Conditions: 150 mM KOAc, 10 mM MgCl2 and 150 mM bicine (pH 8.5), 24 C. This 177-nucleotide RNA was probed chemically with DMS and 2A3. It was measured as part of the RMDB library OK2TRN. 2A3 adducts were read by reverse transcription with SuperScript II with manganese.

RNA sequence: GGGAACGACUCGAGUAGAGUCGAAAAAACGAACGCCGCGCCGGCGCCGGGAUGCGUUCAAGUGGUGGCCGAGGCUGGGCCGCUUCGGGCAUAGGGCGGUGGGCCCACUCCGGCGACCGAGUGGGUAACGGAAAGUGUAAUUCGUUACACUUUCCGUAAAAGAAACAACAACAACAAC
Reactivity to DMS in 0.01 (KOAc 150mM, MgCl2 10mM, bicine 150mM(pH8.5), 24C), signal-to-noise 4, nucleotides 027 to 126: a090a080c100g010a120a110c150g020c010c040g030c030g010c020c010g000g010c040g020c010c010g020g030g030a070u010g010c150g000u000u000c090a120a120g020u000g000g010u010g010g010c000c000g000a070g010g010c070u000g010g000g000c040c040g000c010u000u000c040g020g000g020c010a060u000a100g000g000g010c030g000g040u010g020g000g000c010c010c000a090c080u000c000c030g010g010c030g000a110c010c020g010a090g030u000g010g010g000u000a170
Reactivity to 2A3 in 0.01 (KOAc 150mM, MgCl2 10mM, bicine 150mM(pH8.5), 24C), signal-to-noise 3, nucleotides 027 to 126: a020a010c040g040a030a020c060g030c010c000g110c010g010c030c000g020g000c020g000c020c000g010g010g010a060u080g020c070g060u090u110c080a110a060g050u030g100g030u010g010g090c000c000g020a070g130g080c070u110g070g160g000c040c030g000c030u040u050c040g000g050g000c020a050u120a120g070g010g030c050g070g130u150g050g120g010c000c010c020a000c020u030c010c000g010g000c000g100a140c000c010g000a020g000u020g000g030g000u020a060
For DMS, 5,204 sequencing reads were counted.